[RMDB]
RNA sequence: GGGAACGACUCGAGUAGAGUCGAAAACAGACUCACUUCGGUGAGUCUGAAAGGAGUAAUCGAUUGCGAAAACUACCAGAUUACUCAAGGGUAGUGACAAAAAAAGUUAGAGCUUCGGCUCUAACAAGCAUAGAAUAGUGUUCGCACUAUUCUAUGCAAAAGAAACAACAACAACAAC
Reactivity to 2A3 in 0.01 (KOAc 150mM, MgCl2 10mM, bicine 150mM(pH8.5), 24C), signal-to-noise 7, nucleotides 027 to 126: c010a000g000a000c000u000c000a000c000u030u060c110g110g000u010g000a000g000u000c000u000g000a010a000a000g060g000a010g010u010a010a010u020c050g150a280u160u300g130c060g060a040a050a030a060c000u020a010c000c010a000g000a020u010u030a010c010u000c040a060a090g050g010g000u010a020g020u020g060a060c130a040a190a000a010a000a010a040g000u000u000a000g000a000g010c010u040u060c300g050g000c000u020c000u000a000a000c000a000a000
Reactivity to DMS in 0.01 (KOAc 150mM, MgCl2 10mM, bicine 150mM(pH8.5), 24C), signal-to-noise 6, nucleotides 027 to 126: c010a000g010a010c000u000c000a010c000u000u020c220g040g020u000g020a010g000u000c000u000g000a020a090a100g000g010a030g010u000a010a010u000c000g010a160u010u010g020c140g000a060a070a130a060c010u000a010c020c010a150g000a010u010u000a010c010u000c010a090a070g010g000g000u010a010g010u000g020a120c170a000a000a050a060a060a100a150g000u000u000a000g010a010g010c010u000u010c190g030g010c000u000c000u000a000a000c010a050a090